[RMDB]
RNA sequence: GGGAACGACUCGAGUAGAGUCGAAAAGAAGUUAGGUGAAUUCACCAUCACUUUAGACUGCGAUGUCUUGCAGGCGGAUGGCGGCACUCGUACUGCCUCAAUCAGUGGUGCUUGUGUAGCUUUAGCCCAUCUUAGCGAAAUUCGUUUCGCUAAGAUGAAAAGAAACAACAACAACAAC
Reactivity to 2A3 in 0.01 (KOAc 150mM, MgCl2 10mM, bicine 150mM(pH8.5), 24C), signal-to-noise 9, nucleotides 027 to 126: g080a030a010g040u090u160a050g010g020u050g070a230a280u270u210c020a020c020c020a030u040c010a000c000u060u050u040a040g020a040c020u020g040c070g060a060u100g030u060c020u040u100g040c040a030g010g000c010g060g060a080u100g030g020c010g010g010c010a010c030u020c010g010u030a020c010u010g000c000c020u070c060a110a160u100c020a020g020u020g030g020u020g010c000u030u030g010u010g020u030a020g000c010u040u050u110a030g000c000c000
Reactivity to DMS in 0.01 (KOAc 150mM, MgCl2 10mM, bicine 150mM(pH8.5), 24C), signal-to-noise 9, nucleotides 027 to 126: g000a120a050g010u000u000a100g010g010u000g000a160a130u010u000c080a060c080c050a100u000c070a050c040u000u010u010a060g000a050c020u000g010c150g000a080u000g000u000c050u000u000g010c130a060g000g010c040g010g010a090u000g000g020c070g000g010c020a020c020u000c150g020u010a050c060u000g000c010c030u000c090a080a070u010c240a100g020u000g010g020u000g010c040u000u000g010u000g020u000a110g010c020u000u000u000a150g010c030c020
The record gives the reactivity of an RNA of 177 nucleotides to 2A3 and DMS. The RNA was probed in 150 mM KOAc, 10 mM MgCl2 and 150 mM bicine (pH 8.5) at 24 C. For 2A3, 41,772 sequencing reads were counted. DMS adducts were read by reverse transcription with MarathonRT. For DMS, 24,549 sequencing reads were counted. Reactivities are given for positions 27 through 126. It was measured as part of the RMDB library OK2TST.